Chemical mapping of a 177-nucleotide RNA with DMS and 2A3. The 2A3 profile rests on 441 reads. The data come from the RNA Mapping Database (RMDB), libraries RFM100 and RFMREP. Reactivities are given for positions 27 through 126. For 2A3 the reverse transcriptase was SuperScript II with manganese. Conditions: 150 mM KOAc, 10 mM MgCl2 and 150 mM bicine (pH 8.5), 24 C.

[RMDB]
RNA sequence: GGGAACGACUCGAGUAGAGUCGAAAAACUGAUUGUGAUGACGAUAGUAAGUCAGCAGGUGGAAACACUUUGUGCGUGGGUUAGGUAGCCUCAUAUACAUGAACGACUGAUGUAGAGUUCGGUUGGGAACAGACUCCGUAUUCGUACGGAGUCUGUUAAAAGAAACAACAACAACAAC
Reactivity to DMS in 0.01 (KOAc 150mM, MgCl2 10mM, bicine 150mM(pH8.5), 24C), signal-to-noise 3, nucleotides 027 to 126: a120c060u000g020a110u010u020g030u010g010a090u020g000a080c040g010a150u010a100g000u010a030a150g000u020c020a100g030c070a050g030g020u000g010g000a150a060a100c050a060c050u000u010u000g050u000g000c040g030u000g010g010g010u020u010a050g030g010u000a100g000c050c050u040c040a000u010a080u010a060c160a110u000g000a070a120c060g010a050c040u010g020a050u020g000u010a080g000a140g010u010u000c030g000g010u010u000g000g020g020
Reactivity to 2A3 in 0.01 (KOAc 150mM, MgCl2 10mM, bicine 150mM(pH8.5), 24C), signal-to-noise 1, nucleotides 027 to 126: a000c040u100g060a120u250u000g050u040g100a060u090g000a010c000g000a000u040a100g100u020a070a300g010u030c000a000g020c070a000g010g020u000g000g160a060a070a000c050a000c010u000u040u000g270u180g000c070g010u080g000g040g000u010u010a040g000g080u030a000g020c000c000u040c100a030u040a040u040a120c030a030u060g040a090a000c110g040a000c040u100g080a100u110g090u080a100g000a000g030u000u000c000g000g000u000u040g000g010g000